Structure probing data (DMS) for a 177-nucleotide construct.
The RNA was probed in 150 mM KOAc, 10 mM MgCl2 and 150 mM bicine (pH 8.5) at 24 C.
The data come from the RNA Mapping Database (RMDB), library OK2TST.
Reactivities are rounded to 0.1 and cut off at 0 and 3.
For DMS, 826 sequencing reads were counted.

[RMDB]
RNA sequence: GGGAACGACUCGAGUAGAGUCGAAAAUCACACGAAAGUGUUUAGUGUAAGCUACAAAAGCAAUGUCAGGCUCAACACAAAGGCUACAUUAUGCUCGAUUGGUACCCUACAUGCAGAGGGGCACUGGGAACCAUCGGUUUUUCGAAACCGAUGGUUCAAAAGAAACAACAACAACAAC
Reactivity to DMS in 0.01 (KOAc 150mM, MgCl2 10mM, bicine 150mM(pH8.5), 24C), signal-to-noise 2, nucleotides 027 to 126: u000c070a050c030a010c050g000a060a110a150g010u000g010u010u000u000a080g030u000g010u000a100a050g010c040u040a070c140a040a050a080a060g000c060a100a070u020g010u000c080a100g010g040c040u020c040a020a030c060a020c220a130a000a140g000g000c010u000a040c050a040u000u000a130u000g010c020u000c050g000a150u000u010g000g000u010a020c000c000c000u000a070c140a060u000g000c080a130g000a130g010g000g010g000c110a030c110u010g020g010